[RMDB]
RNA sequence: GGGAACGACUCGAGUAGAGUCGAAAACAUUACGAAUUCAGUCGCAAAUUGUAGAAUUAGCUACUCUACGAUUUAGUGAGCGUUAGUAACGUUGUAAUAUAGUAUAGUCUUUGGAAGGAUUAUAUUGGAGCCGCGGACAAGUUCGCUUGUCCGCGAAGAUUUUGCUACACUUCGGUGUAGCAAAAUCAAAAGAAACAACAACAACAAC
Reactivity to 2A3 in 0.01 (KOAc 150mM, MgCl2 10mM, bicine 150mM(pH8.5), 24C), signal-to-noise 1, nucleotides 027 to 156: c020a010u150u200a020c010g060a110a160u090u200c060a060g110u000c010g000c000a000a010a010u010u000g000u000a000g010a040a060u060u030a060g020c000u050a010c010u000c000u000a000c000g010a010u010u000u080a090g000u000g030a030g030c050g010u000u070a060g060u070a150a030c070g000u010u040g010u040a100a070u080a120u060a050g020u000a020u010a030g000u000c040u010u110u130g180g050a210a120g020g000a000u030u030a010u010a010u020u020g120g030a090g060c080c000g000c000g000g000a000c000a000a000g000u030u040c120g030c150u000u000g000u020c000c040g000c000g000a000a000
Background:
Structure probing data (2A3) for a 207-nucleotide construct. The data come from the RNA Mapping Database (RMDB), library M2RFPK. For 2A3 the reverse transcriptase was SuperScript II with manganese. The reactions ran in a buffer of 150 mM KOAc, 10 mM MgCl2 and 150 mM bicine (pH 8.5), at 24 C.